Chemical mapping of a 177-nucleotide RNA with 2A3. Values are in units of 0.01, from 0 to 300, in steps of 10.

[RMDB]
RNA sequence: GGGAACGACUCGAGUAGAGUCGAAAAGGACGUCACACUCCAUUCUUCUCAAACUAUCGUCCACAAUUCUAUUUCCGUACUACUGACGUAACUGGUGUUGUUCACUUACCAGAAGGUACUGAAAUGGGAGCGUGCCCAUGUUCGCAUGGGCACGCUCAAAAGAAACAACAACAACAAC
Reactivity to 2A3 in 0.01 (KOAc 150mM, MgCl2 10mM, bicine 150mM(pH8.5), 24C), signal-to-noise 2, nucleotides 027 to 126: g040g000a020c000g060u090c090a010c080a050c150u050c070c020a090u160u020c000u060u000c040u000c010a210a110a040c190u290a260u090c010g090u010c000c020a070c010a110a160u130u080c010u020a020u000u000u000c000c070g010u000a000c000u000a000c000u060g140a050c050g040u000a150a000c110u250g060g050u080g040u150u050g170u260u130c030a020c000u050u120a020c000c000a040g010a270a080g070g010u000a000c000u000g000a000a000a000u090g010g020